Description:
The record gives the reactivity of an RNA of 177 nucleotides to 2A3 and DMS. Conditions: 150 mM KOAc, 10 mM MgCl2 and 150 mM bicine (pH 8.5), 24 C. Values cover nucleotides 27 to 126. For DMS the reverse transcriptase was MarathonRT. For 2A3 the reverse transcriptase was SuperScript II with manganese. The DMS profile rests on 1,602 reads.
RNA sequence: GGGAACGACUCGAGUAGAGUCGAAAAGAAUGAUGACAUCUUCAUCGUGUCUCCUAGAGGAGGAAUUGAAGGAUUGUGUCAAAAAAUGUGGACUAUGAUUUCAAUUAGCGCGAUUAACUGUGCUGCGCCCUUACCUCUCUUUCGAGAGAGGUAAGGGAAAAGAAACAACAACAACAAC
Reactivity to 2A3 in 0.01 (KOAc 150mM, MgCl2 10mM, bicine 150mM(pH8.5), 24C), signal-to-noise 2, nucleotides 027 to 126: g030a030a040u200g060a040u050g020a030c010a130u080c100u090u000c000a050u020c030g030u040g060u010c000u000c030c020u100a100g010a110g120g050a010g040g060a010a040u050u020g020a010a020g030g020a000u030u120g250u000g030u120c050a030a030a030a000a050a090u300g080u140g140g000a010c020u030a030u040g020a110u020u090u060c030a010a010u060u050a080g010c030g000c010g050a060u070u090a030a110c030u080g030u050g060c020u030g050c010g040
Reactivity to DMS in 0.01 (KOAc 150mM, MgCl2 10mM, bicine 150mM(pH8.5), 24C), signal-to-noise 2, nucleotides 027 to 126: g000a120a060u020g010a080u000g050a050c150a190u010c150u000u000c040a040u000c040g020u010g000u000c010u000c000c020u010a120g010a240g010g040a080g030g010a050a030u000u010g000a040a030g000g010a160u000u010g010u000g000u000c020a000a040a130a070a070a070u030g020u010g000g010a050c010u000a000u010g020a300u010u000u010c010a010a040u010u000a100g010c010g030c030g010a160u030u000a040a070c130u020g010u000g030c080u000g000c140g000